The data come from the RNA Mapping Database (RMDB), library M2RFOK. An RNA of 207 nucleotides, treated with 2A3 and DMS and read out base by base. Reactivities are given for positions 27 through 156. 2A3 adducts were read by reverse transcription with SuperScript II with manganese.
RNA sequence: GGGAACGACUCGAGUAGAGUCGAAAAAUCCUCAGGUUCAUAAGCGUGAUGAUUGGGUGUUCAUGCUCCAUGCAUGACAUGUGCCUCCUUAGAACCUUGUUACGACCUUGGCACAUUACCCAUCUGAAAAAGACGUUCGCGUUCGCGCGAACGUCAAGUAGGACAAAUUGUUCGCAAUUUGUCCUACAAAAGAAACAACAACAACAAC
Reactivity to 2A3 in 0.01 (KOAc 150mM, MgCl2 10mM, bicine 150mM(pH8.5), 24C), signal-to-noise 4, nucleotides 027 to 156: a000u010c000c000u010c010a000g010g000u010u020c040a110u200a050a020g030c080g080u100g150a100u070g000a030u110u290g010g010g000u050g050u080u030c000a010u000g000c020u050c210c100a150u290g000c000a000u000g000a010c010a020u010g000u000g000c000c000u050c000c000u000u010a010g000a010a020c000c000u020u070g070u040u110a100c100g040a090c040c060u040u100g000g020c000a010c000a010u040u140a040c000c000c000a000u000c020u040g070a080a050a030a040a050g010a000c010g000u000u010c000g000c020g020u030u070c200g000c000g000c000g100a000a010c000g000u000c000a000a000
Reactivity to DMS in 0.01 (KOAc 150mM, MgCl2 10mM, bicine 150mM(pH8.5), 24C), signal-to-noise 2, nucleotides 027 to 156: a150u020c000c010u000c000a060g020g010u000u010c030a120u010a060a080g040c150g040u010g010a140u000g020a080u000u000g040g000g010u010g000u030u000c010a000u010g000c000u000c210c150a190u000g020c000a020u000g000a020c300a170u020g020u000g030c000c010u010c130c010u010u000a070g000a050a020c010c020u020u000g000u000u010a150c200g010a080c090c040u000u000g020g020c000a010c030a100u010u000a090c000c000c000a050u000c030u010g000a070a100a100a170a170g020a020c000g020u000u000c000g060c000g020u000u020c300g010c040g080c000g000a000a000c000g020u000c000a000a030